Chemical mapping of a 177-nucleotide RNA with 2A3. The reactions ran in a buffer of 150 mM KOAc, 10 mM MgCl2 and 150 mM bicine (pH 8.5), at 24 C. 2A3 adducts were read by reverse transcription with SuperScript II with manganese.
RNA sequence: GGGAACGACUCGAGUAGAGUCGAAAACCUUUACCAAAAGAUUUAGUACCAAGUAUUAUUGCUCUUUUAUGAUCUUGCAAAGCUCCAGCAACUAUUUCUGAAGCAGAUGCAGAAUUACCGUUUAUUAACCCAACGACUUAUUCGUAAGUCGUUGGGUAAAAGAAACAACAACAACAAC
Reactivity to 2A3 in 0.01 (KOAc 150mM, MgCl2 10mM, bicine 150mM(pH8.5), 24C), signal-to-noise 1, nucleotides 027 to 126: c000c000u040u130u090a190c070c060a010a030a030a000g030a020u000u120u060a010g030u000a030c020c150a160a000g000u000a010u080u050a020u010u080g050c010u000c000u000u120u000u000a100u150g170a050u000c030u000u100g000c000a100a000a000g000c000u020c010c000a080g000c000a070a080c100u190a100u100u160u040c010u000g000a020a000g000c000a010g030a050u100g000c000a000g000a010a010u100u140a070c000c070g000u000u040u000a140u040u100a040